An RNA of 177 nucleotides, treated with DMS and 2A3 and read out base by base. It was measured as part of the RMDB libraries RFM100 and RFMREP. 2A3 adducts were read by reverse transcription with SuperScript II with manganese. Reactivities are given for positions 27 through 126. The reactions ran in a buffer of 150 mM KOAc, 10 mM MgCl2 and 150 mM bicine (pH 8.5), at 24 C.
RNA sequence: GGGAACGACUCGAGUAGAGUCGAAAAACUGCGACGUACGCGUCGCAGAACCAUAACUACGUCCACAUAACCGACGCGUAUCCCAGUUUCAUAGUAUUUUCUGGACGAGCACGUACGCGUGCUCGAAGCGAUCUUACAAGUUCGCUUGUAAGAUCGCAAAAGAAACAACAACAACAAC
Reactivity to DMS in 0.01 (KOAc 150mM, MgCl2 10mM, bicine 150mM(pH8.5), 24C), signal-to-noise 2, nucleotides 027 to 126: a100c030u040g020c050g020a000c070g050u010a050c170g020c020g040u000c010g070c000a030g000a040a100c040c050a060u060a060a100c180u000a060c120g010u000c050c180a070c090a070u010a120a060c120c100g000a030c040g000c030g010u010a110u000c030c010c000a080g000u020u030u000c130a070u030a090g040u010a030u000u000u000u000c040u000g000g000a300c040g000a000g000c000a000c000g030u020a090c150g020c090g040u010g000c000u010c000g010a020a050
Reactivity to 2A3 in 0.01 (KOAc 150mM, MgCl2 10mM, bicine 150mM(pH8.5), 24C), signal-to-noise 4, nucleotides 027 to 126: a000c000u000g000c030g000a000c010g000u030a010c220g010c000g090u000c000g000c010a000g010a000a010c000c000a050u100a170a060c100u100a030c060g050u030c040c060a040c010a110u090a070a060c020c030g010a010c020g000c010g030u060a130u060c020c000c000a030g000u050u130u070c140a140u130a170g110u120a220u070u130u050u010c040u050g060g020a040c000g010a000g000c000a000c000g040u060a020c260g000c000g090u000g010c000u020c010g000a020a010